[RMDB]
RNA sequence: GGGAACGACUCGAGUAGAGUCGAAAAAGCACGGUUUUUGAGGACGCAUUUUGUCCGUGCGGUAAUGCCCUCCUUUACACUUUAUCGCAUGGUGCGGGAGUGUGGAGAGGAAACAAAAGCUAGUCUCGAUAGGCGGUUAACUUCGGUUAACCGCCAACACCAUAAUUGUGUUCGCACAAUUAUGGUGAAAAGAAACAACAACAACAAC
Reactivity to DMS in 0.01 (KOAc 150mM, MgCl2 10mM, bicine 150mM(pH8.5), 24C), signal-to-noise 2, nucleotides 027 to 156: a080g000c010a070c010g010g020u000u000u000u000u000g000a070g000g010a040c030g010c100a150u000u010u020u000g040u000c000c020g030u000g010c000g000g040u010a050a020u000g000c010c000c030u010c030c010u000u020u000a040c010a020c000u000u000u000a040u010c020g030c000a300u000g020g030u010g030c030g000g020g000a030g000u020g040u030g010g000a020g010a110g010g000a050a040a020c020a040a050a050a090g010c080u010a110g010u000c020u000c070g010a200u000a050g050g060c000g060g060u000u000a000a020c010u000u020c280g020g010u000u010a000a030c020c030g010c000c010a000a050
Reactivity to 2A3 in 0.01 (KOAc 150mM, MgCl2 10mM, bicine 150mM(pH8.5), 24C), signal-to-noise 6, nucleotides 027 to 156: a000g000c000a000c000g000g010u000u000u000u000u010g070a110g000g050a020c050g030c120a150u020u000u000u010g000u000c000c000g000u000g000c010g030g030u150a050a030u300g030c000c000c000u030c010c010u060u110u060a010c010a010c000u040u070u130a230u220c010g010c040a070u230g230g040u260g120c000g000g010g000a010g000u000g000u010g010g000a050g010a010g010g040a020a020a010c000a000a000a000a000g060c030u080a020g010u000c000u000c020g040a120u120a120g000g020c010g000g020u000u000a000a000c010u040u060c140g030g000u000u000a000a000c020c000g000c000c000a000a000